[RMDB]
RNA sequence: GGGAACGACUCGAGUAGAGUCGAAAAAAAGCGCAUGCUUAUCGGGACAACAACCCAACGCGGCAGGUGUACCAUGUACCAUUGGGCAAAACGUUUACUGGCGCGUUUCGAUUGAGGUAGUUUCGACAUGUUCGUAGUAUUUCGAUACUACGAACAUAAAAGAAACAACAACAACAAC
Reactivity to DMS in 0.01 (KOAc 150mM, MgCl2 10mM, bicine 150mM(pH8.5), 24C), signal-to-noise 5, nucleotides 027 to 126: a050a030a030g030c030g010c170a060u010g010c040u000u020a080u010c080g020g000g010a050c060a040a090c160a060a070c030c020c040a030a020c020g010c030g000g000c020a010g010g010u000g010u000a080c030c040a060u010g010u000a090c220c130a140u000u000g010g020g010c070a050a030a100a100c150g010u010u010u010a100c010u000g010g000c010g000c010g020u000u000u000c080g000a160u010u010g000a070g010g020u000a070g000u000u000u000c000g010a190c290
Reactivity to 2A3 in 0.01 (KOAc 150mM, MgCl2 10mM, bicine 150mM(pH8.5), 24C), signal-to-noise 3, nucleotides 027 to 126: a000a000a000g100c120g010c090a110u250g000c030u060u040a070u140c030g020g010g030a010c020a080a010c010a040a050c070c010c000a010a000c010g010c010g070g020c000a010g020g000u040g010u060a250c010c020a020u030g050u060a200c050c050a130u060u060g010g000g000c030a020a030a070a060c070g050u120u120u180a050c020u010g190g000c010g000c000g020u000u030u080c090g080a180u000u190g000a030g050g040u090a030g030u050u000u000c010g010a020c010

This 177-nucleotide RNA was probed chemically with DMS and 2A3. For DMS the reverse transcriptase was MarathonRT. Reactivities are given for positions 27 through 126. The reactions ran in a buffer of 150 mM KOAc, 10 mM MgCl2 and 150 mM bicine (pH 8.5), at 24 C.